RNA sequence: GGGAACGACUCGAGUAGAGUCGAAAAUCAAUCAUGUUCGCAUGAUUGAAAAGGUCAGGUGACCAAACCACGACACGCGUCGUAGCGACCGAGCCCGGAGGCAAAGUGCAAUCUUCGGAUUGCACAACUUACACGUCUGAUUCGUCAGACGUGUAAGAAAAGAAACAACAACAACAAC
Reactivity to 2A3 in 0.01 (KOAc 150mM, MgCl2 10mM, bicine 150mM(pH8.5), 24C), signal-to-noise 4, nucleotides 027 to 126: u010c000a000a000u000c000a000u000g030u050u050c170g000c120a000u000g000a000u000u010g000a030a050a020a010g010g010u020c040a020g020g160u060g140a090c040c000a070a090a030c030c020a020c010g030a010c040a030c140g210c110g020u010c010g010u010a050g060c040g070a030c010c010g010a010g030c010c010c040g020g080a040g030g040c070a110a080a040g000u000g000c000a000a000u000c000u030u070c210g080g000a010u000u010g000c000a000c000a000a000
Reactivity to DMS in 0.01 (KOAc 150mM, MgCl2 10mM, bicine 150mM(pH8.5), 24C), signal-to-noise 5, nucleotides 027 to 126: u000c000a000a000u000c010a000u000g020u000u010c220g020c010a010u000g010a010u000u010g000a010a070a080a130g000g010u000c020a140g020g040u000g000a100c100c110a060a130a150c050c030a080c020g010a040c020a110c290g010c170g000u000c020g020u000a070g010c090g000a060c020c020g000a120g010c000c010c010g010g010a100g000g010c180a050a090a090g000u000g010c000a010a000u010c000u000u000c210g010g000a020u000u000g000c000a000c000a020a060